[RMDB]
RNA sequence: GGGAACGACUCGAGUAGAGUCGAAAAGUCCAGAGGUCCCAUAGGCGACCUCAGCCUGUGUGAUGGUCAGGAAUGUCCAGCUGCCCAGCAGUGCUUCUAGAACGUGGAGUCAGCUCUGGCCCUGAUCACGUACGACGAUUUUCGAAUCGUCGUACGUAAAAGAAACAACAACAACAAC
Reactivity to 2A3 in 0.01 (KOAc 150mM, MgCl2 10mM, bicine 150mM(pH8.5), 24C), signal-to-noise 1, nucleotides 027 to 126: g070u070c000c000a010g020a000g020g000u010c000c010c060a150u170a080g100g000c090g060a060c000c000u020c010a020g030c010c020u110g030u030g020u050g120a190u040g010g000u000c010a000g030g050a150a160u180g080u150c020c000a020g050c040u010g020c000c010c000a070g040c040a050g070u020g020c020u080u090c030u100a100g020a080a000c010g000u010g000g040a100g100u220c010a030g010c020u040c030u050g000g000c000c000c000u000g030a020u030c010
Reactivity to DMS in 0.01 (KOAc 150mM, MgCl2 10mM, bicine 150mM(pH8.5), 24C), signal-to-noise 2, nucleotides 027 to 126: g010u000c030c020a120g010a090g010g000u010c000c000c070a180u010a110g020g060c130g000a110c050c010u000c040a090g010c060c050u000g020u010g000u000g010a110u010g010g010u000c000a040g000g000a200a050u010g000u010c010c080a050g000c020u000g010c040c010c010a060g000c030a070g010u010g010c070u010u010c250u020a080g020a060a030c050g020u000g000g010a050g010u010c010a010g000c060u020c030u020g000g000c080c010c010u020g010a020u000c020